[RMDB]
RNA sequence: GGGAACGACUCGAGUAGAGUCGAAAACUCUCGCCCUGUACGUCCUCUCAGGCAUAGAGAUGACCAUUUGCCUAGGGUGAGUCUUUAAGUAGACACAGCCUAUCUAUGGUGACGUAUUGGGGCACGGGUUUUAACACCCCCGUGACGGUCGGAGGCUCUUGUAAAGCUGGUUCGCCAGCUUUACAAGAAAAGAAACAACAACAACAAC
Reactivity to 2A3 in 0.01 (KOAc 150mM, MgCl2 10mM, bicine 150mM(pH8.5), 24C), signal-to-noise 2, nucleotides 027 to 156: c000u000c020u010c070g000c000c010c020u050g000u000a000c000g010u030c000c010u060c010u090c210a000g010g000c000a020u070a040g160a010g060a110u190g100a110c030c020a130u060u000u050g010c000c000u000a010g040g000g000u020g000a010g010u000c000u050u160u050a300a300g250u110a010g040a000c000a000c000a000g020c010c000u110a150u240c030u030a000u160g000g000u000g000a000c000g000u000a020u110u300g000g000g000g000c010a000c030g010g010g030u000u000u040u040a040a010c030a120c000c020c000c010c020g080u090g020a070c100g040g060u050c050g020g020a060g120g040c020u000